[RMDB]
RNA sequence: GGGAACGACUCGAGUAGAGUCGAAAACAUCUUUCCUCCCUACACAGUGACUCCAGCUUGGGAGGGGCAGGGCUAGGCUGAGCCAGCACUCCCUGUGGUGUCUGCCUGCCACGUGCAGCUCUGGAGUAGAAUGAUCAAUUUUCGAAUUGAUCAUUCUAAAAGAAACAACAACAACAAC
Reactivity to DMS in 0.01 (KOAc 150mM, MgCl2 10mM, bicine 150mM(pH8.5), 24C), signal-to-noise 8, nucleotides 027 to 126: c100a070u020c100u010u010u010c010c000u000c000c000c000u010a100c270a140c300a060g010u000g000a110c000u000c010c000a020g010c060u010u010g000g010g000a020g000g000g000g020c010a050g010g000g010c020u020a030g000g000c020u010g010a300g010c070c010a040g010c030a060c060u010c030c030c060u010g010u000g010g000u000g000u010c030u000g000c050c010u000g010c040c040a060c160g000u010g010c020a080g010c110u000c020u000g000g000a030g000u000
Reactivity to 2A3 in 0.01 (KOAc 150mM, MgCl2 10mM, bicine 150mM(pH8.5), 24C), signal-to-noise 9, nucleotides 027 to 126: c030a080u080c080u060u100u040c010c010u050c010c000c000u120a090c180a030c040a140g100u030g070a030c000u000c010c000a010g000c020u050u060g010g000g000a010g010g000g000g000c010a010g020g010g010c040u300a020g010g000c010u030g030a030g120c050c010a010g030c020a030c040u080c000c000c010u030g020u030g020g010u030g150u020c010u020g010c010c000u020g020c010c020a160c110g170u150g000c010a040g010c020u020c020u060g000g000a000g000u000
Overview
An RNA of 177 nucleotides, treated with DMS and 2A3 and read out base by base. The 2A3 profile rests on 31,969 reads. The RNA was probed in 150 mM KOAc, 10 mM MgCl2 and 150 mM bicine (pH 8.5) at 24 C. Values cover nucleotides 27 to 126.